The record gives the reactivity of an RNA of 177 nucleotides to DMS and 2A3. High 2A3 reactivity points to a flexible backbone, as in loops and unpaired stretches. The data come from the RNA Mapping Database (RMDB), library OK2TRN. The reactions ran in a buffer of 150 mM KOAc, 10 mM MgCl2 and 150 mM bicine (pH 8.5), at 24 C.

[RMDB]
RNA sequence: GGGAACGACUCGAGUAGAGUCGAAAAAGAAUGAGAAUUGGCCAGUAAUUCUUUGGUAUCAAAAACUGUCUAUUAGCAAACAGUUGACAACAUGAUUGGACUAAUAGCCGCUCACAUUCCAUGGGAAGUAUUUACUAUCUUUCGAGAUAGUAAAUACAAAAGAAACAACAACAACAAC
Reactivity to DMS in 0.01 (KOAc 150mM, MgCl2 10mM, bicine 150mM(pH8.5), 24C), signal-to-noise 9, nucleotides 027 to 126: a060g010a070a050u010g010a100g010a090a120u000u000g020g020c020c050a080g010u010a070a050u000u000c030u000u010u000g010g010u000a090u010c080a050a070a070a060a070c050u000g000u000c030u010a130u010u000a080g020c160a090a090a100c020a020g010u000u000g010a110c150a050a060c110a050u000g000a070u000u000g010g010a070c030u000a020a050u000a070g010c040c060g010c040u000c030a040c060a080u000u000c010c020a080u010g020g000g010a100a130
Reactivity to 2A3 in 0.01 (KOAc 150mM, MgCl2 10mM, bicine 150mM(pH8.5), 24C), signal-to-noise 7, nucleotides 027 to 126: a000g050a030a020u070g010a020g030a060a130u140u090g040g000c010c010a020g050u070a050a120u110u030c000u080u060u050g040g010u110a080u210c050a030a090a030a020a030c020u020g030u030c010u050a130u100u100a080g040c060a090a060a070c000a030g010u030u060g090a060c080a110a010c010a100u120g020a120u070u080g030g020a010c010u020a020a060u020a090g000c010c010g020c020u020c000a040c000a040u060u000c010c020a040u050g040g000g030a100a110